[RMDB]
The record gives the reactivity of an RNA of 177 nucleotides to 2A3 and DMS. It was measured as part of the RMDB library 15KREP.
RNA sequence: GGGAACGACUCGAGUAGAGUCGAAAACAACUGUUAUCUUGCCACUGCAUUGUUAACACUCCAACAAAUAGAGUUGCAGUUUAAUCCACCUGCUCUACAAAGGGCUGGUGAAGCUGCUAACUUUUGUUCUGUAGUUAGAGUUCGCUCUAACUACAGAAAAAGAAACAACAACAACAAC
Reactivity to 2A3 in 0.01 (KOAc 150mM, MgCl2 10mM, bicine 150mM(pH8.5), 24C), signal-to-noise 3, nucleotides 027 to 126: c020a000a030c040u050g010u080u030a060u040c040u040u020g050c020c080a170c140u150g020c020a040u070u040g040u050u050a040a010c010a010c040u010c040c010a030a040c020a030a190a070u180a030g020a000g030u010u020g000c000a010g010u030u050u070a100a060u050c030c000a000c000c000u010g000c010u010c010u050a110c080a070a250a050g000g000g000c000u010g000g000u010g000a000a000g000c000u000g000c020u050a010a000c010u010u040u030u090g110u020
Reactivity to DMS in 0.01 (KOAc 150mM, MgCl2 10mM, bicine 150mM(pH8.5), 24C), signal-to-noise 1, nucleotides 027 to 126: c090a030a190c150u000g020u010u000a000u000c030u000u010g010c010c200a120c120u000g040c040a050u000u000g040u000u000a040a080c060a040c070u000c030c030a090a090c120a070a090a080u020a050g010a010g010u000u010g020c000a020g040u000u000u000a110a060u010c130c000a010c000c000u000g020c000u010c000u000a130c300a060a170a050g010g000g000c000u000g030g030u000g000a080a010g000c000u010g000c010u000a020a010c000u000u000u000u000g000u010
For 2A3, 2,946 sequencing reads were counted. For 2A3 the reverse transcriptase was SuperScript II with manganese. Values cover nucleotides 27 to 126. Values are in units of 0.01, from 0 to 300, in steps of 10. The RNA was probed in 150 mM KOAc, 10 mM MgCl2 and 150 mM bicine (pH 8.5) at 24 C.